About this RNA:
Source: RMDB libraries RFM100 and RFMREP, as collected in RNAgym. Chemical mapping of a 177-nucleotide RNA with DMS and 2A3.
[RMDB]
RNA sequence: GGGAACGACUCGAGUAGAGUCGAAAAGAUUCCUGGAUAGAGCAUCUCAUAGGAAAGUACCGUUAGAAAGAUCAACUCGUAAUUGAUUGAGUAUAAAUAACCUCUAGAGGGAGGUCGCGUGGAAACUGGAUACCAUUAAAUUCGUUUAAUGGUAUCCAAAAGAAACAACAACAACAAC
Reactivity to DMS in 0.01 (KOAc 150mM, MgCl2 10mM, bicine 150mM(pH8.5), 24C), signal-to-noise 8, nucleotides 027 to 126: g010a250u010u000c010c000u010g020g000a110u020a060g010a090g010c090a070u010c020u000c090a110u010a070g020g010a060a040a090g010u010a100c060c080g020u010u010a010g000a100a110a250g000a000u000c010a010a020c020u020c300g010u050a140a240u000u000g010a020u000u000g000a050g010u000a040u000a010a030a080u010a110a060c080c020u000c020u000a100g020a130g010g010g010a020g000g010u000c100g010c150g000u010g000g000a090a090a070c140u000
Reactivity to 2A3 in 0.01 (KOAc 150mM, MgCl2 10mM, bicine 150mM(pH8.5), 24C), signal-to-noise 9, nucleotides 027 to 126: g100a060u040u020c000c010u010g040g020a050u080a110g120a020g050c040a060u040c030u020c080a100u150a070g050g020a060a040a010g060u050a070c030c010g010u020u010a020g000a020a010a000g010a010u010c010a010a030c040u050c120g170u250a090a100u020u010g010a010u000u010g010a000g010u010a010u010a040a080a010u150a030a020c010c000u030c030u050a080g030a090g210g080g010a010g030g020u040c030g020c040g090u090g030g040a070a050a030c040u010